[RMDB]
RNA sequence: GGGAACGACUCGAGUAGAGUCGAAAAAUGAAGGCUCACGCCGUGGCAGCUACGGCGGUGCAGUGGGCUACUUCACUGCUCACGGUGAUUUGGAUACCUGCAUUGUGAUUCGUUCUGCCUACGUAGAUAUUUUAUUAUGAUUCGUCAUAAUAAAAUAAAAAGAAACAACAACAACAAC
Reactivity to 2A3 in 0.01 (KOAc 150mM, MgCl2 10mM, bicine 150mM(pH8.5), 24C), signal-to-noise 5, nucleotides 027 to 126: a000u170g030a070a040g040g000c020u020c040a030c060g010c020c000g010u000g000g030c070a070g010c050u050a010c010g030g000c000g000g000u020g000c000a010g020u170g020g080g000c000u030a020c000u030u020c010a010c020u030g030c050u080c070a150c090g010g010u020g010a050u030u040u060g060g000a060u080a130c010c000u010g010c010a020u020u060g070u080g090a210u160u100c010g010u020u020c010u020g030c020c010u040a030c050g050u050a030g040a140
Reactivity to DMS in 0.01 (KOAc 150mM, MgCl2 10mM, bicine 150mM(pH8.5), 24C), signal-to-noise 9, nucleotides 027 to 126: a090u010g010a110a100g010g020c090u000c090a120c120g010c050c020g020u000g010g010c060a050g000c140u000a040c020g010g010c020g000g020u000g000c020a030g010u010g010g010g000c030u000a020c040u000u000c020a020c010u000g000c150u010c200a080c090g010g010u000g000a050u000u000u000g000g000a090u010a060c050c010u000g000c020a030u000u000g010u010g010a140u010u000c030g010u000u000c010u000g010c020c020u010a060c120g010u000a100g000a190
Record summary: Source: RMDB library OK2TST, as collected in RNAgym. Structure probing data (2A3 and DMS) for a 177-nucleotide construct. The RNA was probed in 150 mM KOAc, 10 mM MgCl2 and 150 mM bicine (pH 8.5) at 24 C. For DMS, 31,091 sequencing reads were counted. The 2A3 profile rests on 10,051 reads. Values cover nucleotides 27 to 126. For DMS the reverse transcriptase was MarathonRT.